[RMDB]
An RNA of 177 nucleotides, treated with DMS and 2A3 and read out base by base. The RNA was probed in 150 mM KOAc, 10 mM MgCl2 and 150 mM bicine (pH 8.5) at 24 C. For 2A3, 8,567 sequencing reads were counted. DMS adducts were read by reverse transcription with MarathonRT. Reactivities are given for positions 27 through 126. Reactivities are rounded to 0.1 and cut off at 0 and 3.

RNA sequence: GGGAACGACUCGAGUAGAGUCGAAAAUGUGGGGAAGCUUCAUGAGUAAGGAGGAUCCACAAGAAUUAUUUUCAGCUCUUCUAGGAUUGAGCAGAUUAGAAAAAACAAACACUGAAGCUAUGGCCUGUACCAAGUAAGAAUUCGUUCUUACUUGGUAAAAAGAAACAACAACAACAAC
Reactivity to DMS in 0.01 (KOAc 150mM, MgCl2 10mM, bicine 150mM(pH8.5), 24C), signal-to-noise 8, nucleotides 027 to 126: u000g020u010g010g010g000g010a130a120g010c020u000u000c030a070u010g020a160g020u010a110a100g010g010a100g010g000a140u000c020c030a050c090a040a110g010a100a080u000u000a070u000u000u000u000c020a080g010c010u000c010u000u000c070u000a160g010g010a100u000u000g010a030g030c010a070g010a040u010u000a060g010a000a030a060a040a120a080c120a080a080a060c090a070c070u000g000a040a030g010c030u000a070u000g000g000c040c040u000g010
Reactivity to 2A3 in 0.01 (KOAc 150mM, MgCl2 10mM, bicine 150mM(pH8.5), 24C), signal-to-noise 6, nucleotides 027 to 126: u080g000u060g000g000g010g030a070a010g040c020u020u020c030a090u150g160a070g120u100a060a040g030g040a020g020g050a050u000c020c010a020c020a040a010g040a060a060u180u080a050u040u090u010u050c020a020g000c000u010c000u080u030c050u160a120g110g150a300u040u090g010a040g000c020a000g030a050u040u120a090g120a020a090a000a010a010a010c060a010a070a010c040a010c060u040g010a030a010g000c020u020a080u090g070g020c010c010u030g010